Structure probing data (DMS and 2A3) for a 207-nucleotide construct. DMS adducts were read by reverse transcription with MarathonRT.
RNA sequence: GGGAACGACUCGAGUAGAGUCGAAAAUACCGUCUUCUCCCCGACGGUUUCAAUCUAUAGCUUCACGUUGUGUAGCGUAGGUGGAAGGUAUCGUGUGGUGUAUAAACACCACAUAGUCUCUUAGGGGUCAAGCUGAUAAACUUCGGUUUAUCAGCAACUGACCCUAGAGAUUCGUCUCUAGGGUCAGAAAAGAAACAACAACAACAAC
Reactivity to DMS in 0.01 (KOAc 150mM, MgCl2 10mM, bicine 150mM(pH8.5), 24C), signal-to-noise 3, nucleotides 027 to 156: u010a060c000c010g010u010c010u000u000c040u000c010c000c020c100g020a050c030g020g020u000u000u020c040a030a060u000c010u000a040u000a090g020c010u000u000c010a030c010g000u000u000g030u000g030u010a020g040c010g020u000a020g010g020u000g020g010a080a080g020g010u000a060u000c060g010u000g020u000g010g020u010g020u000a180u000a140a110a150c000a000c000c000a000c000a000u000a030g010u000c060u010c020u000u000a250g020g010g000g020u010c030a060a230g000c010u000g000a020u000a010a000a010c000u000u000c300g050g000u000u000u000a010u000c000a000g010c010a010a020
Reactivity to 2A3 in 0.01 (KOAc 150mM, MgCl2 10mM, bicine 150mM(pH8.5), 24C), signal-to-noise 7, nucleotides 027 to 156: u070a000c010c000g010u010c020u240u020c030u100c000c000c000c010g000a000c000g000g000u010u020u040c030a020a020u010c010u000a010u010a080g000c010u030u070c010a030c070g300u300u300g010u080g010u030a000g000c010g000u000a010g000g020u030g030g040a070a050g090g030u130a060u160c040g000u000g000u000g000g030u000g050u020a090u100a220a260a020c000a000c000c000a000c000a000u000a000g020u000c010u000c010u130u190a040g000g020g000g000u050c050a080a030g000c000u000g000a000u010a010a000a000c000u030u050c160g070g000u010u000u000a000u000c000a000g000c000a000a000
Values cover nucleotides 27 to 156. The reactions ran in a buffer of 150 mM KOAc, 10 mM MgCl2 and 150 mM bicine (pH 8.5), at 24 C. For DMS, 12,327 sequencing reads were counted.